[RMDB]
RNA sequence: GGGAACGACUCGAGUAGAGUCGAAAACAUGGCGGCGGCCGGUGUGCGCACCGCGAACAGCGAAAUCGUAGACAGCCCAGCGCACUUGGACGCGGCCCUGGACCGGUUCGGGCCGCCUGCCGGUGACGAGAUACGGUACAUUCGUGUACCGUAUCUCAAAAGAAACAACAACAACAAC
Reactivity to DMS in 0.01 (KOAc 150mM, MgCl2 10mM, bicine 150mM(pH8.5), 24C), signal-to-noise 3, nucleotides 027 to 126: c060a080u000g010g030c000g000g000c010g010g030c010c000g000g020u000g040u010g010c020g040c030a260c140c080g020c000g020a050a090c130a190g020c070g010a060a080a140u010c060g010u000a090g000a120c170a150g010c030c040c030a170g000c010g000c010a010c010u010u010g020g010a040c060g000c010g010g010c070c020c060u010g030g000a100c020c010g020g000u000u000c090g010g010g000c030c000g010c010c010u010g040c000c000g000g020u010g010a140c160
Reactivity to 2A3 in 0.01 (KOAc 150mM, MgCl2 10mM, bicine 150mM(pH8.5), 24C), signal-to-noise 2, nucleotides 027 to 126: c030a060u120g020g000c030g010g000c010g010g000c030c030g110g100u150g000u010g010c020g000c040a060c030c050g000c020g050a160a090c100a080g080c020g110a040a060a090u160c070g040u050a050g070a180c060a070g030c020c000c020a000g000c010g010c000a020c000u050u130g030g010a040c070g000c010g300g000c010c000c020u180g060g070a110c000c010g000g000u040u050c000g030g010g000c000c000g040c030c030u030g000c010c010g000g020u020g050a060c100
Overview:
Chemical mapping of a 177-nucleotide RNA with DMS and 2A3. The DMS profile rests on 3,228 reads. For 2A3 the reverse transcriptase was SuperScript II with manganese.